[RMDB]
The record gives the reactivity of an RNA of 177 nucleotides to 2A3 and DMS. The data come from the RNA Mapping Database (RMDB), library M2PK50. The reactions ran in a buffer of 150 mM KOAc, 10 mM MgCl2 and 150 mM bicine (pH 8.5), at 24 C. In probing experiments dimethyl sulfate is read out at A N1 and C N3, which are open when not base-paired. 2A3 adducts were read by reverse transcription with SuperScript II with manganese. For DMS the reverse transcriptase was MarathonRT. The DMS profile rests on 8,236 reads. Values cover nucleotides 27 to 126.
RNA sequence: GGGAACGACUCGAGUAGAGUCGAAAACUAGACGGGUUCGCCCGUCUAGAAACGGAGCGAAUAGCGGGCUUCGCCUCCGGCCCAGCCCUUCCGCUGACCCCCAAAGCUCAACCUUCGGGUUGAGCAAGAAUCAGUUAUACUUCGGUAUAACUGAUUCAAAAGAAACAACAACAACAAC
Reactivity to 2A3 in 0.01 (KOAc 150mM, MgCl2 10mM, bicine 150mM(pH8.5), 24C), signal-to-noise 5, nucleotides 027 to 126: c000u000a010g010a010c010g000g010g040u040u080c170g060c050c000c000g000u000c000u000a000g000a000a010a010c020g020g010a010g020c020g010a050a040u060a150g020c020g000g020g010c020u030u030c010g030c040c080u010c010c020g050g020c010c010c000a030g030c040c010c000u190u140c040c000g000c040u060g170a170c010c000c000c010c030a040a050a020g000c000u000c000a000a000c000c010u030u080c210g050g000g000u000u000g000a000g000c000a000a000
Reactivity to DMS in 0.01 (KOAc 150mM, MgCl2 10mM, bicine 150mM(pH8.5), 24C), signal-to-noise 7, nucleotides 027 to 126: c000u000a000g010a000c000g000g010g010u000u010c210g020c010c000c000g000u010c000u000a000g000a050a130a130c040g000g000a050g010c020g000a040a020u000a080g020c010g000g000g010c300u000u000c020g010c120c030u010c020c020g010g010c030c020c040a170g010c060c050c100u000u010c020c010g010c010u010g000a300c020c000c000c010c030a080a110a120g010c000u000c000a000a010c000c000u000u010c170g020g000g010u000u000g000a000g020c010a010a020